[RMDB]
RNA sequence: GGGAACGACUCGAGUAGAGUCGAAAAGAUAUGGAUGUAUAGCUUUUGACGACGGUGUGUCGGAAACGACACUAACGUCGAUAAGCUAUGACAUCCUAAGUCAAACGUGUACCUUCGGGUACACGAAUCAUUACAAUAUGUUCGCAUAUUGUAAUGAAAAAGAAACAACAACAACAAC
Reactivity to DMS in 0.01 (KOAc 150mM, MgCl2 10mM, bicine 150mM(pH8.5), 24C), signal-to-noise 9, nucleotides 027 to 126: g000a020u000a160u010g000g000a010u000g010u000a020u000a000g010c000u000u000u000u010g010a200c130g010a020c010g000g000u000g010u000g010u000c000g010g000a030a030a090c000g010a020c000a010c010u010a060a090c010g030u000c000g020a050u010a010a010g010c000u000a000u000g010a020c000a000u000c000c000u000a010a090g000u000c020a110a130a280c020g010u000g010u000a000c000c000u000u010c240g030g010g020u000a000c000a000c000g000a080a090
Reactivity to 2A3 in 0.01 (KOAc 150mM, MgCl2 10mM, bicine 150mM(pH8.5), 24C), signal-to-noise 9, nucleotides 027 to 126: g010a000u030a010u080g000g000a000u000g010u010a010u000a010g000c030u100u120u250u300g300a300c150g000a010c010g010g040u040g010u000g000u050c000g000g000a020a020a000c010g000a000c000a010c040u050a180a020c010g000u000c000g000a010u050a060a000g000c000u000a000u010g010a010c000a000u000c000c000u000a020a000g010u000c030a100a040a110c020g000u000g000u000a000c000c000u030u100c300g170g000g000u000a000c000a000c000g010a000a070
Record summary
An RNA of 177 nucleotides, treated with DMS and 2A3 and read out base by base. 2A3 adducts were read by reverse transcription with SuperScript II with manganese.